[RMDB]
RNA sequence: GGGAACGACUCGAGUAGAGUCGAAAACGACCUUAAACAGUUCUGGUGGUGCUCUGAAUGGAGUGCUCUACUGAGAUUAUAAAAUAGAAGGUAAGCUAUUAUCUCUUACAACAGGGCAGGGAUUGUUAAAAGCCUUUCAGUUUCGACUGAAAGGCAACUUGUACGCACAGUUCGCUGUGCGUACAAGAAAAGAAACAACAACAACAAC
Reactivity to 2A3 in 0.01 (KOAc 150mM, MgCl2 10mM, bicine 150mM(pH8.5), 24C), signal-to-noise 2, nucleotides 027 to 156: c020g040a020c000c010u070u140a050a040a040c010a040g010u040u050c010u080g080g000u110g060g170u100g010c020u010c010u020g120a100a090u160g030g030a020g020u080g010c040u060c030u020a110c010u000g070a010g010a090u060u160a110u300a190a120a170a010u050a010g060a060a020g110g000u040a060a000g000c000u070a130u170u050a070u210c000u010c020u030u060a040c020a160a040c030a070g020g000g000c000a010g040g050g040a020u010u000g010u000u060a090a170a060a000g000c020c000u000u000u000c000a000g000u000u040u150c190g100a040c010u000g000a000a000a000g020g000c000a000a000